RNA sequence: GGGAACGACUCGAGUAGAGUCGAAAAAAGCUUUCAGACAUCGACAUUCGGCACAUCGCGGAGGAGAUUGAGGACGUGGGCAAGAGCGAACAGCGGGAGUUGGCAAGCCGCAUGGCGGUACUGCUGGUAUGUUGCAGUCUUUCGAGACUGCAACAUAAAAAGAAACAACAACAACAAC
Reactivity to DMS in 0.01 (KOAc 150mM, MgCl2 10mM, bicine 150mM(pH8.5), 24C), signal-to-noise 2, nucleotides 027 to 126: a050a100g020c080u000u010u000c050a060g000a110c080a040u000c070g020a100c060a100u000u000c080g010g020c060a040c160a080u000c080g010c050g000g000a050g000g030a110g020a080u000u000g010a120g000g000a070c120g030u010g020g010g000c060a060a060g000a080g010c030g020a060a060c130a050g050c040g000g000g000a030g010u010u000g030g000c000a020a090g000c020c010g010c030a120u000g020g010c030g010g020u010a050c060u000g000c050u010g000g010